The record gives the reactivity of an RNA of 170 nucleotides to 2A3 and DMS. 2A3 adducts were read by reverse transcription with SuperScript II with manganese. The 2A3 profile rests on 13,894 reads.

RNA sequence: GGGAACGACUCGAGUAGAGUCGAAAAUUUGUGGGACAUUACAGUUAUAAACAAUGUGGACAAUGAAAUUGUUAAGUCUUCAGAUGUUGUAGACAGCAAUGAAAAUUUAACAUGGCCACUUGUUUUAGAGCAGAUCGGUUCGCCGAUCUGAAAAGAAACAACAACAACAAC
Reactivity to 2A3 in 0.01 (KOAc 150mM, MgCl2 10mM, bicine 150mM(pH8.5), 24C), signal-to-noise 6, nucleotides 027 to 129: u060u050u090g060u040g020g050g040a030c050a050u060u120a050c020a100g070u050u120a120u090a120a010a000c030a000a050u180g000u020g010g000a010c060a070a110u200g070a170a110a090u100u020g000u010u030a060a030g010u000c000u020u000c010a080g080a300u090g050u080u010g010u050a040g060a180c030a010g000c020a020a000u000g040a020a030a010a010u040u050u020a000a000c020a020u010g040g000c000c000a000c000u000u000g000u000u010u020u070a030g000a010g050
Reactivity to DMS in 0.01 (KOAc 150mM, MgCl2 10mM, bicine 150mM(pH8.5), 24C), signal-to-noise 5, nucleotides 027 to 129: u040u010u000g030u040g000g000g000a110c100a040u010u010a060c110a060g030u070u030a060u000a010a010a010c020a010a080u060g000u000g000g000a080c110a100a150u090g000a050a060a040u020u000g000u040u030a050a050g020u020c030u040u000c020a030g030a170u020g000u010u000g000u060a080g000a090c030a000g000c030a020a170u000g020a010a010a020a020u000u040u030a000a000c030a020u020g000g030c000c010a000c040u000u000g010u000u000u000u000a000g000a130g030